[RMDB]
RNA sequence: GGGAACGACUCGAGUAGAGUCGAAAACAUUGUAGCGGUCAGUAAGGAAAACGUGCCAGAUCGUGACAUUUUGAAAAUCGAUGAUGAAUGGCUUGAAGAAGGUUUAGACAAAAUUAAGUCUGAAAUUGUAGAAAUUUGGGACGUUAUCCAAGGUCAAUAGUGAUGGAGUAUUCGUACUCCAUCACUAAAAAGAAACAACAACAACAAC
Reactivity to DMS in 0.01 (KOAc 150mM, MgCl2 10mM, bicine 150mM(pH8.5), 24C), signal-to-noise 3, nucleotides 027 to 156: c050a100u020u000g000u000a110g020c040g000g040u000c040a130g020u020a140a160g050g020a060a070a050a050c090g020u000g020c000c020a080g010a030u000c010g040u000g020a090c030a070u010u000u010u020g010a060a060a130a180u010c080g020a070u000g020a140u000g010a070a050u000g010g000c010u000u010g020a070a150g010a130a080g010g000u000u000u010a100g000a100c030a050a050a130a180u000u000a060a100g010u000c010u000g010a110a050a050u000u010g030u010a170g020a070a040a110u000u000u000g010g000g030a040c020g010u000u000a090u000c020c010a070a120g000g020u000c040a050a180
Reactivity to 2A3 in 0.01 (KOAc 150mM, MgCl2 10mM, bicine 150mM(pH8.5), 24C), signal-to-noise 5, nucleotides 027 to 156: c040a040u080u170g070u110a020g040c020g050g030u060c050a040g050u150a200a150g070g010a010a070a020a040c030g010u030g110c010c000a000g000a020u020c020g020u080g050a010c050a050u110u140u060u200g130a090a040a020a080u110c110g020a060u120g010a020u040g040a110a070u070g020g020c020u030u070g030a040a050g030a020a050g080g000u080u100u210a030g030a020c020a000a170a010a010u150u120a080a030g000u000c000u010g050a050a080a080u110u110g030u060a050g050a110a110a040u040u030u020g000g000g010a000c010g030u030u030a010u000c020c030a060a060g060g020u080c000a050a120